[RMDB]
Chemical mapping of a 177-nucleotide RNA with 2A3 and DMS. Source: RMDB library OK1LIB, as collected in RNAgym. For 2A3, 12,501 sequencing reads were counted. The reactions ran in a buffer of 150 mM KOAc, 10 mM MgCl2 and 150 mM bicine (pH 8.5), at 24 C.
RNA sequence: GGGAACGACUCGAGUAGAGUCGAAAACUGCCCUGGGUUUUCGCUGUCUUACAGAAAGACUGUGCCUAAUUAGUUCGUCUCUUAAUCGGAUGGAAGUUGUGAAAUUUGUAAGGGCGGAUAAUUAACGCGAUAAGUUAUCAUUCGUGAUAAUUUAUCGAAAAGAAACAACAACAACAAC
Reactivity to 2A3 in 0.01 (KOAc 150mM, MgCl2 10mM, bicine 150mM(pH8.5), 24C), signal-to-noise 9, nucleotides 027 to 126: c050u090g020c000c000c000u020g020g020g020u020u020u020u060c010g010c030u030g020u030c010u010u090a080c040a050g160a070a030a000g010a000c010u020g020u040g030c010c010u040a060a040u040u040a020g060u010u010c010g030u000c060u010c000u110u080a120a130u120c030g040g010a020u030g050g050a080a070g040u140u120g050u030g070a050a050a070u040u030u030g050u050a010a010g000g000g000c000g010g000a010u040a030a050u050u040a090a030c070g000
Reactivity to DMS in 0.01 (KOAc 150mM, MgCl2 10mM, bicine 150mM(pH8.5), 24C), signal-to-noise 9, nucleotides 027 to 126: c080u020g000c000c000c010u010g000g000g010u000u000u010u000c040g000c010u000g000u010c040u010u010a110c150a100g010a090a010a040g000a030c010u010g010u010g010c080c030u000a030a040u010u010a040g020u010u000c010g010u010c010u030c030u000u010a070a100u030c080g000g000a040u000g000g010a100a080g010u020u020g000u010g010a130a070a060u010u010u010g010u010a060a040g000g010g000c000g000g000a030u010a020a020u010u020a050a120c230g010